Chemical mapping of a 177-nucleotide RNA with DMS and 2A3.
The reactions ran in a buffer of 150 mM KOAc, 10 mM MgCl2 and 150 mM bicine (pH 8.5), at 24 C.
The 2A3 profile rests on 6,832 reads.
High 2A3 reactivity points to a flexible backbone, as in loops and unpaired stretches.
The DMS profile rests on 3,770 reads.

RNA sequence: GGGAACGACUCGAGUAGAGUCGAAAAGGCCGAGCUCCAAGGGAGGGAGGGAAUAUAUACAAGGUGCGAUUUAAGGAGCAAGUAUGUAUAGGGAAGUGAAGAAGCACCGAAAACUUCACACGGCCGACAGGAUAUACUCAUUCGUGAGUAUAUCCUGAAAAGAAACAACAACAACAAC
Reactivity to DMS in 0.01 (KOAc 150mM, MgCl2 10mM, bicine 150mM(pH8.5), 24C), signal-to-noise 4, nucleotides 027 to 126: g010g040c010c010g020a190g000c020u000c020c020a130a300g000g020g000a120g030g020g000a110g000g000g000a120a050u000a070u000a040u010a100c120a050a140g010g010u000g020c010g000a140u000u010u000a120a100g020g000a040g030c040a100a110g000u000a060u010g000u000a090u010a090g020g010g000a130a070g030u000g010a020a030g020a190a110g010c040a030c070c060g000a050a040a030a050c020u000u000c020a020c050a260c040g000g000c010c010g010a200
Reactivity to 2A3 in 0.01 (KOAc 150mM, MgCl2 10mM, bicine 150mM(pH8.5), 24C), signal-to-noise 5, nucleotides 027 to 126: g020g000c000c000g010a020g020c000u040c020c030a030a030g050g040g080a230g030g040g030a170g030g000g040a090a020u130a010u020a000u000a090c080a080a090g040g010u030g010c020g030a030u020u140u220a090a050g020g010a020g010c040a020a040g100u100a100u210g070u020a080u080a090g030g020g030a060a070g030u040g060a030a030g040a080a010g050c000a010c030c000g000a020a000a020a030c010u040u040c020a030c000a010c040g010g000c000c010g000a010